[RMDB]
RNA sequence: GGGAACGACUCGAGUAGAGUCGAAAAGAAAGCAGUUUUUGAUGUUGCAGAUACUGCAUCAGGAACUGACUGGAUAAGACUUAAUCCCCAUCAGUUCCUAAUGCAUUGCCUUCAGCAUCUAAACAAAAAACUUGCUGACAUUCGUGUCAGCAAGUUUAAAAGAAACAACAACAACAAC
Reactivity to 2A3 in 0.01 (KOAc 150mM, MgCl2 10mM, bicine 150mM(pH8.5), 24C), signal-to-noise 3, nucleotides 027 to 126: g130a000a050a030g070c130a040g010u010u000u020u100u060g010a000u000g000u030u000g000c040a000g010a010u050a050c010u000g000c000a000u000c020a010g000g020a000a000c000u000g000a020c130u020g000g000a020u050a220a040g010a010c030u120u180a050a020u120c030c000c020c000a020u000c000a010g000u000u000c000c010u000a000a000u000g000c000a000u000u050g020c010c000u000u010c000a000g000c000a010u000c000u040a000a010a010c050a060a090a010
Reactivity to DMS in 0.01 (KOAc 150mM, MgCl2 10mM, bicine 150mM(pH8.5), 24C), signal-to-noise 2, nucleotides 027 to 126: g050a110a040a100g000c230a120g000u000u000u000u110u020g000a030u000g000u000u000g000c130a030g020a050u000a030c130u030g000c030a000u000c010a020g010g010a000a000c000u000g000a010c300u010g060g050a090u030a230a090g040a100c300u020u070a090a120u000c090c090c030c020a130u000c000a000g000u010u000c020c010u000a030a000u000g000c000a050u000u000g000c020c000u000u000c000a010g020c000a000u000c000u000a050a010a000c030a020a040a070
Chemical mapping of a 177-nucleotide RNA with 2A3 and DMS. For DMS, 1,709 sequencing reads were counted. Source: RMDB library RFM100, as collected in RNAgym. Values cover nucleotides 27 to 126. For DMS the reverse transcriptase was MarathonRT. The reactions ran in a buffer of 150 mM KOAc, 10 mM MgCl2 and 150 mM bicine (pH 8.5), at 24 C. For 2A3, 2,702 sequencing reads were counted.